This 177-nucleotide RNA was probed chemically with DMS and 2A3.
For DMS the reverse transcriptase was MarathonRT.
For 2A3 the reverse transcriptase was SuperScript II with manganese.
High DMS reactivity at an A or C suggests that its Watson-Crick edge is free.
It was measured as part of the RMDB library M2PK50.
RNA sequence: GGGAACGACUCGAGUAGAGUCGAAAAGCCAUCGCUUUCGAGCGAUGGCAUUGCCCAAAGAGGACCUGGGGGUGACUGGGCUGCUAAACUCAUCAGCCGUUCUACCGCUAAAUUUCGAUUUAGCGAAAGUUAAGGUAAGCUUCGGCUUACCUUAACUAAAAGAAACAACAACAACAAC
Reactivity to DMS in 0.01 (KOAc 150mM, MgCl2 10mM, bicine 150mM(pH8.5), 24C), signal-to-noise 2, nucleotides 027 to 126: g010c000c000a000u000c000g000c000u000u000u010c160g030a020g020c000g010a010u000g000g000c000a000u000u000g020c010c000c010a080a090a140g000a070g000g000a090c090c020u000g000g030g010g000g010u010g020a080c110u010g020g000g020c020u010g000c080u000a090a140a090c060u000c040a080u000c060a040g010c020c010g000u000u000c010u000a140c150c010g010c000u000a010a010a000u000u000u020c140g000a040u000u000u000a000g000c010g000a050a060
Reactivity to 2A3 in 0.01 (KOAc 150mM, MgCl2 10mM, bicine 150mM(pH8.5), 24C), signal-to-noise 1, nucleotides 027 to 126: g000c000c000a000u000c000g000c020u090u050u140c180g140a020g000c010g000a010u010g020g030c010a000u010u100g020c000c000c000a040a070a020g110a040g010g020a030c000c050u050g040g010g010g000g020u000g000a000c040u050g000g060g000c020u020g020c030u110a140a080a030c020u010c050a090u030c020a040g020c040c010g000u010u000c040u170a240c020c020g000c010u010a030a040a070u130u130u110c190g040a010u000u020u010a010g020c000g030a230a120